RNA sequence: GGGAACGACUCGAGUAGAGUCGAAAAUCUCUGGGGCGCAAAGAGGAUCUGGACAAAGAGAAUUGUGAUGAAGAUGAUCAUUCAGGCACAGAGAACAUCGGUAGCUCUGAAAAAAGAGGGAAUUAUUCAGAUCUAAAAAUAGUUCAUGGAGUAAAUGGUAUCGAAGGAUCUUCGGAUCCUUCGAUACAAAAGAAACAACAACAACAAC
Reactivity to 2A3 in 0.01 (KOAc 150mM, MgCl2 10mM, bicine 150mM(pH8.5), 24C), signal-to-noise 1, nucleotides 027 to 156: u020c060u000c010u010g000g000g080g050c040g000c100a040a040a150g070a010g070g000a030u000c030u040g090g000a050c100a090a060a060g060a000g080a110a230u110u040g000u070g000a080u100g010a000a040g050a090u140g050a020u060c000a080u100u060c010a010g030g000c000a000c000a000g030a030g020a100a000c010a130u080c060g070g020u030a030g000c000u000c020u050g060a080a050a050a020a030a000g050a030g090g020g000a060a000u160u050a070u080u030c020a000g000a000u000c000u030a010a010a080a110a110u070a050g020u020u080c030a050u120g010g000a030g000u030a060a200a160u170g030

Overview: Structure probing data (2A3) for a 207-nucleotide construct. For 2A3 the reverse transcriptase was SuperScript II with manganese. It was measured as part of the RMDB library OK3TST.